[RMDB]
RNA sequence: GGGAACGACUCGAGUAGAGUCGAAAAGAUAUGGACCAUUGUCGCUAGAUCUCACUCGGAAACGAGUGGUGAUCUUGGACCGACACUGUGGUCCUAAGUCAAACUACAACAGUUCGCUGUUGUAGAACUGAGAUUUCAAGUUCGCUUGAAAUCUCAGAAAAGAAACAACAACAACAAC
Reactivity to DMS in 0.01 (KOAc 150mM, MgCl2 10mM, bicine 150mM(pH8.5), 24C), signal-to-noise 4, nucleotides 027 to 126: g020a040u000a260u010g000g010a020c000c000a040u000u010g020u000c010g010c100u010a000g000a000u010c000u010c000a010c000u000c000g020g020a090a120a170c000g010a020g030u010g000g010u010g020a000u000c010u000u010g040g010a080c300c000g000a010c040a040c300u010g020u000g010g020u000c000c020u000a020a100g000u000c010a150a110a260c010u000a010c000a000a010c000a000g020u020u020c290g060c000u000g010u000u000g000u000a000g000a050a190
Reactivity to 2A3 in 0.01 (KOAc 150mM, MgCl2 10mM, bicine 150mM(pH8.5), 24C), signal-to-noise 3, nucleotides 027 to 126: g010a020u060a030u110g000g000a010c010c010a010u020u030g030u010c010g010c120u050a020g010a020u010c020u010c020a000c010u000c020g000g050a060a100a030c020g000a020g020u000g020g000u060g000a010u000c040u000u160g050g080a110c070c030g020a000c030a020c150u170g050u070g080g000u000c010c010u000a070a000g000u020c060a070a080a110c010u030a000c010a010a000c000a000g060u110u160c300g060c160u000g020u040u000g010u000a010g010a030a010

The data come from the RNA Mapping Database (RMDB), library TTRDES. Chemical mapping of a 177-nucleotide RNA with DMS and 2A3. The DMS profile rests on 2,920 reads. For DMS the reverse transcriptase was MarathonRT. For 2A3, 5,891 sequencing reads were counted. Values cover nucleotides 27 to 126. For 2A3 the reverse transcriptase was SuperScript II with manganese.